[RMDB]
RNA sequence: GGGAACGACUCGAGUAGAGUCGAAAAGAAUUAAGUGGUGUUAAACUAGGUGACCCAAUACCACACCAUCACAAUGAUAGUGAAAAAAUGGACUAUAAAUCAUAUGCAGCUGAUAAAGCAAAGGCGACUCUUUGGUACUCUUCGGAGUACCAAAGAGAAAAGAAACAACAACAACAAC
Reactivity to DMS in 0.01 (KOAc 150mM, MgCl2 10mM, bicine 150mM(pH8.5), 24C), signal-to-noise 2, nucleotides 027 to 126: g000a090a180u030u000a040a130g030u020g000g080u000g010u020u000a100a070a190c280u060a100g000g070u000g000a050c040c060c040a190a080u000a070c030c010a070c000a010c060c020a040u010c050a010c110a140a050u040g000a100u000a040g000u000g000a020a020a120a050a120a080u020g020g000a080c020u010a130u020a080a020a140u030c060a030u000a060u010g020c110a130g050c020u000g000a090u020a080a050a060g040c040a010a040a070g010g000c020g000a080
Reactivity to 2A3 in 0.01 (KOAc 150mM, MgCl2 10mM, bicine 150mM(pH8.5), 24C), signal-to-noise 5, nucleotides 027 to 126: g090a020a050u210u140a190a040g010u020g080g030u050g010u100u210a160a080a090c190u120a120g050g000u030g050a070c000c000c000a000a030u090a060c020c010a040c000a030c020c000a060u080c040a000c020a110a070u240g130a070u130a060g050u110g180a110a020a030a020a020a060u110g040g030a000c020u060a020u120a290a170a050u160c090a050u030a030u250g030c010a000g000c020u020g040a100u170a150a110a000g010c030a040a000a030g090g000c010g000a030